[RMDB]
RNA sequence: GGGAACGACUCGAGUAGAGUCGAAAAAAGAAUAUGAAUGAUCAUAAGAAAAGGGCGAACUAUGAGAAUGGCCUCUGACGAUGGCUGGCAGGAGAAGCGGGUGGAUGUAGGAAAGGCUGCAUUAAUUCACUGUCUUUCUACAAGUGCUUAGGGAGCAGGGCAUUUAUUACUUCGGUAAUAAAUGCCCAAAAGAAACAACAACAACAAC
Reactivity to 2A3 in 0.01 (KOAc 150mM, MgCl2 10mM, bicine 150mM(pH8.5), 24C), signal-to-noise 2, nucleotides 027 to 156: a000a000g170a100a050u200a080u090g010a120a050u110g050a030u100c010a020u070a280a120g020a040a130a030a000g010g000g000c050g000a060a030c070u040a160u200g030a030g030a030a080u050g050g000c000c030u010c040u050g010a010c050g050a010u040g020g020c030u030g030g020c050a000g050g040a040g000a020a070g010c040g020g010g010u060g010g020a070u090g040u050a030g040g050a010a000a010g010g010c030u030g010c040a030u000u300a150a060u240u200c010a010c050u010g050u010c000u030u020u000c010u030a030c010a090a080g070u010g080c000u050u100a020g020g050g000a040g050c060a090